[RMDB]
RNA sequence: GGGAACGACUCGAGUAGAGUCGAAAAGGGCGUCAUUUCGAUGACGCCCAUACGUCUACUCCGAUUGGCGAGGACGUCGCCGACGGGCGCGUUUGCCAAUCGCACCGUCCAGAUUCGUCUGGACGAAGGGAAGUCAGGUAUUCGUACCUGACUUCCCAAAAGAAACAACAACAACAAC
Reactivity to DMS in 0.01 (KOAc 150mM, MgCl2 10mM, bicine 150mM(pH8.5), 24C), signal-to-noise 1, nucleotides 027 to 126: g020g000g030c000g020u010c000a030u010u000u020c240g010a040u000g000a010c000g010c000c000c000a010u010a000c190g010u000c000u000a020c000u000c020c000g000a020u000u030g000g000c010g000a150g000g000a000c030g010u000c040g010c000c000g000a010c300g020g000g010c000g040c000g000u010u000u010g010c000c000a020a010u000c000g000c070a120c110c030g010u000c000c000a000g000a040u000u000c100g020u020c000u000g030g000a010c000g000a070a070
Reactivity to 2A3 in 0.01 (KOAc 150mM, MgCl2 10mM, bicine 150mM(pH8.5), 24C), signal-to-noise 2, nucleotides 027 to 126: g000g000g000c000g020u010c000a010u010u080u160c210g080a010u010g000a000c010g020c030c010c000a010u020a000c000g060u000c010u000a010c000u000c020c020g000a010u000u010g000g000c040g040a080g030g170a090c000g050u170c050g020c000c020g130a300c210g030g000g000c000g000c010g020u000u020u100g000c010c000a000a000u000c010g030c000a040c020c020g000u020c000c000a000g000a020u040u070c170g080u000c090u000g000g010a000c010g000a010a000